The data come from the RNA Mapping Database (RMDB), library OK1LIB.
An RNA of 177 nucleotides, treated with DMS and 2A3 and read out base by base.
Conditions: 150 mM KOAc, 10 mM MgCl2 and 150 mM bicine (pH 8.5), 24 C.
For DMS the reverse transcriptase was MarathonRT.
The DMS profile rests on 5,337 reads.
RNA sequence: GGGAACGACUCGAGUAGAGUCGAAAAUGGUGGAGUCUUCAACGGCAUCAGCGGCAGCCGUAUUGCGGGCCCGCUACCCACGCACAGCCGCCAGCCUUGACCGCUACGGCGGCGGCACGGCCCGAAGCUCGUACGUUAAUUUCGAUUAACGUACGAGAAAAGAAACAACAACAACAAC
Reactivity to DMS in 0.01 (KOAc 150mM, MgCl2 10mM, bicine 150mM(pH8.5), 24C), signal-to-noise 4, nucleotides 027 to 126: u040g020g020u010g000g000a070g000u000c060u030u000c060a070a060c110g040g000c050a100u040c110a070g000c060g000g010c080a120g000c010c020g010u020a110u020u000g030c070g010g020g000c010c010c070g010c040u010a080c020c010c020a110c130g000c080a110c130a170g000c020c010g000c020c020a080g000c000c000u000u030g000a280c100c110g010c040u000a120c290g000g000c010g030g000c020g010g000c000a230c170g000g000c020c010c030g000a160a090g010
Reactivity to 2A3 in 0.01 (KOAc 150mM, MgCl2 10mM, bicine 150mM(pH8.5), 24C), signal-to-noise 6, nucleotides 027 to 126: u160g010g000u030g010g040a160g020u010c020u030u050c050a030a030c020g000g000c020a080u070c080a160g080c030g090g000c030a020g020c000c010g030u060a170u020u160g020c020g000g000g010c000c010c020g030c010u080a120c010c010c000a010c020g030c000a090c020a060g000c000c000g010c020c020a010g000c010c020u120u150g080a210c040c030g000c020u040a040c120g030g000c000g000g000c000g000g000c000a010c010g010g000c000c000c030g040a030a020g030